[RMDB]
RNA sequence: GGGAACGACUCGAGUAGAGUCGAAAACAGGUACAUGCUGGGUCCUACAGUGAGAGCAUGAGCCGUGUAACACGCCAUCGUCACACGGGAGCCUCCCCGGACCCACGGUGAGAGUACGUGUAACACGCCGAGUCGGCGGAUUCGUCCGCCGACUCGGAAAAGAAACAACAACAACAAC
Reactivity to 2A3 in 0.01 (KOAc 150mM, MgCl2 10mM, bicine 150mM(pH8.5), 24C), signal-to-noise 1, nucleotides 027 to 126: c010a010g060g000u080a050c040a000u020g140c000u000g080g000g000u040c010c020u010a080c000a080g010u000g010a030g000a000g060c050a030u080g130a030g140c000c000g100u000g040u060a060a060c000a000c090g300c060c010a200u190c040g000u000c000a000c000a000c120g000g000g000a000g000c000c000u120c000c000c000c000g000g000a000c000c000c000a000c000g000g000u060g070a010g000a000g070u070a080c220g050u020g000u020a000a180c210a000c300g080